[RMDB]
RNA sequence: GGGAACGACUCGAGUAGAGUCGAAAAGGAGUGUGCUGAUGUCAGCAUAGAUGAUGUAUUAUACAUGUUUUGUGUGGUUUGCUAUAUUUCUACUUAUAGAUGGCUAAAAUCUGAGUUUGAGAGCAGCGCGUCCAAGAGAAUUCGUUCUCUUGGACGCAAAAGAAACAACAACAACAAC
Reactivity to DMS in 0.01 (KOAc 150mM, MgCl2 10mM, bicine 150mM(pH8.5), 24C), signal-to-noise 3, nucleotides 027 to 126: g010g010a070g030u020g010u000g020c060u010g010a170u030g020u020c070a050g020c090a050u010a050g000a090u010g010a060u000g040u000a090u010u020a090u010a060c060a060u000g000u010u020u010u000g000u000g030u000g020g020u000u000u000g000c030u010a040u030a080u010u010u000c010u010a040c050u000u020a090u030a070g010a060u010g020g000c170u030a050a050a080a030u010c020u010g000a040g000u000u020u030g000a090g000a060g000c130a060g010c110
Reactivity to 2A3 in 0.01 (KOAc 150mM, MgCl2 10mM, bicine 150mM(pH8.5), 24C), signal-to-noise 5, nucleotides 027 to 126: g080g010a060g040u070g010u000g000c010u020g020a160u130g170u190c010a010g000c010a050u090a040g070a040u120g030a010u040g050u070a070u180u080a050u100a040c050a030u070g100u040u050u050u040g070u030g030u030g050g050u030u090u020g010c000u000a000u000a060u200u100u000c010u020a060c020u060u040a040u060a190g030a030u020g070g000c100u120a060a080a010a020u010c020u040g030a040g010u020u210u080g060a060g000a020g060c040a000g000c000
The record gives the reactivity of an RNA of 177 nucleotides to DMS and 2A3. For 2A3 the reverse transcriptase was SuperScript II with manganese.